RNA sequence: GGGAACGACUCGAGUAGAGUCGAAAACUCAAUGUAGGGAAUAACAUUGAGUUGAUACAAAUACCUUUUUCGGUGUAGGGAAAAACACCGAAUUGAUACAAAUACCUUUCUCAAUGUAGGGAAUAACAAAACAGGCAUCGCUUCGGCGAUGCCUGAAGAACAUGGUUUAGUUCGCUAAACCAUGUUCAAAAGAAACAACAACAACAAC
Reactivity to 2A3 in 0.01 (KOAc 150mM, MgCl2 10mM, bicine 150mM(pH8.5), 24C), signal-to-noise 3, nucleotides 027 to 156: c000u000c000a000a010u000g010u030a090g070g150g140a130a220u150a130a000c000a000u000u000g000a000g000u000u020g020a010u070a080c060a010a130a040u170a070c010c000u030u000u000u000u010c000g000g000u020g010u020a020g050g020g070a150a150a030a040a020c000a010c020c020g000a000a030u000u030g020a000u010a030c020a010a090a030u090a060c020c010u040u140u030c060u050c060a120a180u220g060u130a100g010g010g050a020a080u120a140a030c050a050a030a010a030c010a010g000g000c000a000u010c000g040c020u060u110c200g060g000c000g000a000u000g000c000c000u000g000a000a000
Reactivity to DMS in 0.01 (KOAc 150mM, MgCl2 10mM, bicine 150mM(pH8.5), 24C), signal-to-noise 1, nucleotides 027 to 156: c020u000c000a040a010u000g000u000a050g020g020g040a140a200u010a110a030c000a010u000u000g000a000g000u010u020g000a060u000a040c040a070a110a070u010a010c000c000u000u000u000u000u000c000g010g020u010g050u010a130g010g040g010a120a160a100a150a030c000a020c010c000g000a020a000u010u000g030a060u010a060c050a070a120a080u000a040c010c030u000u000u000c030u000c010a020a110u020g030u010a040g000g000g020a090a030u010a060a080c140a110a070a060a280c010a080g000g040c000a030u000c010g000c000u000u010c300g020g100c040g100a040u000g000c010c000u000g010a010a070